The data come from the RNA Mapping Database (RMDB), libraries RFM100 and RFMREP.
An RNA of 177 nucleotides, treated with DMS and 2A3 and read out base by base.
Values are in units of 0.01, from 0 to 300, in steps of 10.
Values cover nucleotides 27 to 126.
[RMDB]
RNA sequence: GGGAACGACUCGAGUAGAGUCGAAAAUGAGGAUUGUUUAUGAGAGUAUUAUAAGUCACUACAUUUGGUAAGCAAAGUGUUGUUUCUCAAACGAAGUGACUUAUGAUAAUCUCAUGAAUGGAUUUUGGACCAACAUUACAUUCGUGUAAUGUUGGUCAAAAGAAACAACAACAACAAC
Reactivity to DMS in 0.01 (KOAc 150mM, MgCl2 10mM, bicine 150mM(pH8.5), 24C), signal-to-noise 3, nucleotides 027 to 126: u030g010a180g000g010a050u010u000g000u000u000u000a000u000g000a010g000a030g000u000a000u000u000a010u000a000a010g000u000c010a000c000u000a110c240a100u000u000u000g000g000u000a020a020g000c020a020a060a300g000u030g020u000u000g000u000u000u000c010u010c000a010a000a010c060g000a080a040g020u000g000a010c000u000u000a000u000g010a010u000a000a020u000c010u000c000a000u000g000a010a010u000g010g010a110u000u010u010u000g020
Reactivity to 2A3 in 0.01 (KOAc 150mM, MgCl2 10mM, bicine 150mM(pH8.5), 24C), signal-to-noise 8, nucleotides 027 to 126: u240g020a070g080g050a080u070u070g010u000u020u010a000u000g000a000g000a000g010u010a000u010u010a000u000a000a000g010u000c000a000c010u050a030c010a040u000u000u010g020g010u030a010a010g010c010a020a070a150g150u280g100u240u020g000u000u010u000c040u000c000a000a000a000c030g060a060a010g000u000g000a000c000u000u000a000u000g000a000u000a000a010u000c000u000c000a010u000g000a000a010u040g040g060a020u020u020u040u170g150